[RMDB]
RNA sequence: GGGAACGACUCGAGUAGAGUCGAAAAGGCGAUCGAGAGGCCCUCUCAUUAAUGCGGAGAUGUCACGCUGACAGAAUGAUAUUAGAUGUCCGCUUCCGGGUGCAUCGCGGCGAUGAUUACAUAGGACAUCGAUUACCCAUUAGCUUCGGGGAAGCAACAGUAUCAUUACCUUCGGGUAAUGAUACUGAAAAGAAACAACAACAACAAC
Reactivity to 2A3 in 0.01 (KOAc 150mM, MgCl2 10mM, bicine 150mM(pH8.5), 24C), signal-to-noise 6, nucleotides 027 to 156: g040g010c030g040a050u050c060g030a060g020a040g170g020c000c020c000u030c000u000c010a130u070u220a160a090u160g030c030g030g030a060g020a060u060g030u030c020a030c080g000c080u040g030a040c030a060g150a100a080u090g040a040u070a050u180u150a080g030a080u050g020u010c000c000g000c000u090u030c060c030g040g000g000u050g030c030a030u060c040g010c040g090g020c050g060a030u020g030a030u060u170a060c070a110u170a070g040g040a010c000a010u010c010g000a020u040u060a040c030c000c010a030u070u100a020g020c030u050u050c050g050g000g040g000a000a010g010c020a010a050
Reactivity to DMS in 0.01 (KOAc 150mM, MgCl2 10mM, bicine 150mM(pH8.5), 24C), signal-to-noise 3, nucleotides 027 to 156: g020g010c010g010a080u010c040g020a120g010a100g040g020c000c010c020u000c120u000c020a140u000u000a050a130u000g010c020g010g010a160g000a070u000g000u000c000a050c040g060c040u010g000a150c070a090g020a100a080u000g020a080u010a090u010u000a130g020a110u000g000u000c010c020g000c060u000u010c060c040g030g030g070u010g030c070a060u000c030g020c050g010g020c080g010a070u010g000a060u010u000a100c070a140u000a110g040g010a040c000a050u000c020g010a100u000u000a040c010c000c000a090u000u000a150g010c060u000u000c080g010g000g020g010a070a080g010c040a110a160
An RNA of 207 nucleotides, treated with 2A3 and DMS and read out base by base. It was measured as part of the RMDB library OK3TST. The reactions ran in a buffer of 150 mM KOAc, 10 mM MgCl2 and 150 mM bicine (pH 8.5), at 24 C.